[RMDB]
RNA sequence: GGGAACGACUCGAGUAGAGUCGAAAAGAAAGAAAGAAAGCUGACCCUUCUGCUGACGAAUCUUGUGGAGCACCACAGUGCAGAAGGGGAGAGAAGCUUUAAUGCCGACCGUCUGGGCAGCCUUGAAAAAACGGAUUCUUCUUCGGAAGAAUCCGAACUGUUAAUAUAAGUUCGCUUAUAUUAACAGAAAAGAAACAACAACAACAAC
Reactivity to 2A3 in 0.01 (KOAc 150mM, MgCl2 10mM, bicine 150mM(pH8.5), 24C), signal-to-noise 2, nucleotides 027 to 156: g090a010a070a000g060a040a120a000g070a020a040a010g000c010u040g050a050c000c000c000u000u010c000u000g000c000u040g060a110c090g050a090a120u100c050u140u070g000u010g020g050a120g100c150a120c130c010a010c000a030g020u020g010c000a000g000a010a000g000g000g000g010a000g010a000g010a020a010g010c000u030u000u000a060a030u100g000c020c010g020a060c000c030g080u060c040u090g000g020g000c000a010g040c010c020u030u100g070a130a080a010a020a030a030c010g000g000a000u000u000c000u000u000c010u010u020c090g060g000a000a010g000a010a000u010c000c000g000a010a000
Reactivity to DMS in 0.01 (KOAc 150mM, MgCl2 10mM, bicine 150mM(pH8.5), 24C), signal-to-noise 2, nucleotides 027 to 156: g020a130a110a130g020a090a060a120g000a060a030a040g020c020u010g010a140c000c010c000u010u000c010u000g010c020u020g020a180c050g000a110a110u000c080u000u010g030u020g000g020a220g040c240a120c030c010a040c010a040g010u000g020c000a020g000a000a010g020g010g000g000a010g010a080g010a120a030g020c020u000u000u070a040a070u000g000c000c000g000a090c010c020g000u000c080u030g030g030g020c020a070g000c000c040u000u020g010a000a050a080a030a090a240c010g020g010a020u000u000c010u000u000c000u000u020c300g050g000a010a010g010a050a000u010c000c000g000a000a010